The record gives the reactivity of an RNA of 177 nucleotides to DMS. DMS adducts were read by reverse transcription with MarathonRT. The RNA was probed in 150 mM KOAc, 10 mM MgCl2 and 150 mM bicine (pH 8.5) at 24 C. It was measured as part of the RMDB library M2PK50. For DMS, 3,393 sequencing reads were counted.
[RMDB]
RNA sequence: GGGAACGACUCGAGUAGAGUCGAAAAUUCCCCUAUUUCGAUAGGGGAACACCUGGGGGCGGCUCGCAGUUCCGACUUCCUCCUCCUCUGAGUCAAAGGGCGAUAGGCCUCGGUUCGCCGAGGCCAAUGCCCUAGUAAGGUUCGCCUUACUAGGGCAAAAAGAAACAACAACAACAAC
Reactivity to DMS in 0.01 (KOAc 150mM, MgCl2 10mM, bicine 150mM(pH8.5), 24C), signal-to-noise 3, nucleotides 027 to 126: u000u000c000c000c000c020u010a010u000u000u010c130g020a030u000a010g000g000g020g000a020a020c080a060c020c030u000g020g010g000g000g000c080g010g000c080u010c030g000c090a070g000u010u000c050c050g000a110c070u010u000c020c020u000c040c010u000c020c030u000c030u000g010a080g000u010c060a070a100a090g010g000g010c060g010a120u000a090g010g010c010c000u000c000g010g010u000u010c220g020c000c000g020a020g000g010c010c000a000a020